[RMDB]
RNA sequence: GGGAACGACUCGAGUAGAGUCGAAAACAGAGCAUUGAGGUCGUCGGUUGGGUCGAGGAUCCGGAAACAUAUCCGAUCCAACCCAAACAACAUUCAUUGGAAUUCCUGCGGGAGGUGGCGCACCUGCGCCAUGAUUUACCUUCGGGUAAAUCAUGGCAAAAGAAACAACAACAACAAC
Reactivity to 2A3 in 0.01 (KOAc 150mM, MgCl2 10mM, bicine 150mM(pH8.5), 24C), signal-to-noise 9, nucleotides 027 to 126: c050a010g100a020g090c060a060u060u090g040a030g050g040u100c050g010u010c020g050g030u020u010g020g010g010u040c100g140a180g050g010a020u050c150c120g020g040a070a130a020c120a110u230a120u110c000c000g000a000u000c000c000a010a010c000c000c010a020a030a010c020a010a010c020a050u060u120c020a030u030u110g060g050a070a050u070u040c010c010u030g020c030g020g000g010a060g010g050u040g010g010c020g000c020a040c010c010u040g010c030
Reactivity to DMS in 0.01 (KOAc 150mM, MgCl2 10mM, bicine 150mM(pH8.5), 24C), signal-to-noise 9, nucleotides 027 to 126: c110a110g000a130g020c040a040u010u010g010a040g030g010u000c050g010u000c060g000g010u000u000g000g000g020u000c070g010a140g000g010a030u010c150c100g020g000a050a110a150c250a110u040a100u010c010c000g000a030u000c000c000a090a020c010c000c030a040a040a040c060a040a040c060a060u010u010c020a040u010u010g000g010a090a130u010u010c010c010u000g000c010g000g000g010a070g000g010u010g000g000c030g000c060a120c030c020u000g000c160
Structure probing data (2A3 and DMS) for a 177-nucleotide construct. The 2A3 profile rests on 45,532 reads. The data come from the RNA Mapping Database (RMDB), library OK1LIB. The reactions ran in a buffer of 150 mM KOAc, 10 mM MgCl2 and 150 mM bicine (pH 8.5), at 24 C. For DMS, 35,406 sequencing reads were counted.